[RMDB]
RNA sequence: GGGAACGACUCGAGUAGAGUCGAAAAGCUCGCCGACGACUAUCGCGCGCAGGAGAGCACGCGGCACGGCGCCUCGCGCCAUGGUGACUAGCCGCCAGAGCCAUCGGCAGGGCCUGCCUGAGCCAGGGGUGUUCAUAGUUUUCGAACUAUGAACACCAAAAGAAACAACAACAACAAC
Reactivity to 2A3 in 0.01 (KOAc 150mM, MgCl2 10mM, bicine 150mM(pH8.5), 24C), signal-to-noise 3, nucleotides 027 to 126: g010c010u020c020g000c010c000g040a080c010g010a030c070u090a050u260c040g000c020g000c020g000c110a020g050g140a140g010a020g060c010a020c030g030c010g060g000c050a020c100g040g010c020g030c030c030u120c060g010c010g000c010c030a070u110g040g000u030g030a170c070u110a020g030c030c010g000c000c010a020g020a010g070c020c010a020u040c060g000g040c040a180g020g000g000c000c000u050g010c030c010u040g050a040g020c020c040a060g120g030
Reactivity to DMS in 0.01 (KOAc 150mM, MgCl2 10mM, bicine 150mM(pH8.5), 24C), signal-to-noise 2, nucleotides 027 to 126: g000c040u000c020g000c020c000g040a080c030g020a060c060u010a050u000c180g010c060g020c010g020c120a160g000g010a060g030a080g000c040a050c070g010c070g020g000c080a120c140g000g000c050g000c040c090u010c190g000c050g030c020c060a050u000g010g020u000g010a160c070u000a130g000c060c050g010c020c040a050g000a220g020c020c000a010u000c010g010g000c000a070g020g000g000c020c010u000g020c010c030u000g000a080g000c020c020a060g000g000